[RMDB]
RNA sequence: GGGAACGACUCGAGUAGAGUCGAAAAUAAUGAACAACCUAUUAUGAAAGCCCUAUCCCUAGUGAUUAGCCUAGUCGUGAUUAGCGUGGUGGUGAUUAUUAUCCCACCGUGCGGGGCUGCACUUGGAUCUAUCCUGUUACUUCGGUAACAGGAUAGAAAAAGAAACAACAACAACAAC
Reactivity to 2A3 in 0.01 (KOAc 150mM, MgCl2 10mM, bicine 150mM(pH8.5), 24C), signal-to-noise 8, nucleotides 027 to 126: u030a000a050u070g080a100a080c040a040a040c030c070u090a050u080u040a070u080g130a120a050a030g020c000c000c010u050a110u130c020c000c010u010a010g010u000g040a180u160u130a010g020c020c010u060a090g090u150c080g120u160g140a150u130u150a030g000c010g000u020g010g000u010g000g050u190g080a000u010u150a060u120u150a010u060c000c000c000a000c000c000g000u000g000c010g000g010g010g000c000u010g000c000a000c000u010u020g000g010a010
Reactivity to DMS in 0.01 (KOAc 150mM, MgCl2 10mM, bicine 150mM(pH8.5), 24C), signal-to-noise 5, nucleotides 027 to 126: u010a020a060u010g010a140a110c180a140a120c140c060u020a040u000u010a050u000g000a100a100a120g010c010c000c000u010a130u030c060c010c050u000a030g000u000g020a060u010u010a020g030c030c040u000a060g010u010c110g010u000g000a120u020u020a090g010c010g020u000g000g000u000g000g020u020g010a010u000u040a130u010u040a170u000c010c000c000a010c010c010g030u000g000c000g000g000g010g000c010u000g010c030a020c020u020u000g010g010a180